[RMDB]
RNA sequence: GGGAACGACUCGAGUAGAGUCGAAAAGACUACAUCAGAGAUUGCACUUGACCACCCAGACCGUAAGAAGGAAGCUAUCCGUGACCCUUCUAUCUUUACAGGUGGCCUUACUACCUCUCUUACAGGUAUGCACUGCGAUAUUGCCGUACUAGAUGACAAGGACUCUAAGUUUCGACUUAGAGUCCUUAAAAGAAACAACAACAACAAC
Reactivity to 2A3 in 0.01 (KOAc 150mM, MgCl2 10mM, bicine 150mM(pH8.5), 24C), signal-to-noise 1, nucleotides 027 to 156: g010a020c010u040a040c020a070u060c020a020g040a000g050a150u060u140g030c050a000c050u050u070g030a050c000c000a010c020c060c000a050g080a060c000c030g030u040a030a010g000a020a000g060g010a020a010g000c000u040a030u150c120c030g050u030g090a140c000c060c020u060u000c030u080a190u070c020u030u080u170a020c000a010g040g000u010g000g000c000c000u060u090a090c080u020a030c010c000u030c000u040c000u090u000a020c010a040g040g000u000a010u100g010c060a000c100u010g000c000g040a000u010a050u070u050g020c000c000g000u000a040c030u150a020g060a070u080g020a030c050
Reactivity to DMS in 0.01 (KOAc 150mM, MgCl2 10mM, bicine 150mM(pH8.5), 24C), signal-to-noise 1, nucleotides 027 to 156: g020a080c010u000a050c040a150u020c080a060g050a090g000a100u000u010g030c000a070c120u000u010g000a090c080c040a100c040c010c010a130g020a110c070c050g060u000a000a060g010a050a140g000g010a090a140g050c080u000a040u000c090c130g020u010g020a110c080c000c030u030u000c040u010a130u000c080u000u020u000a080c150a040g000g090u010g000g030c020c000u010u000a090c050u010a090c020c010u000c080u000c020u020u040a090c060a080g000g010u010a070u010g000c030a060c060u000g050c060g000a090u020a040u010u010g010c060c060g000u010a140c070u000a110g000a120u010g000a100c060

Conditions: 150 mM KOAc, 10 mM MgCl2 and 150 mM bicine (pH 8.5), 24 C. Chemical mapping of a 207-nucleotide RNA with 2A3 and DMS. For 2A3, 877 sequencing reads were counted. For 2A3 the reverse transcriptase was SuperScript II with manganese.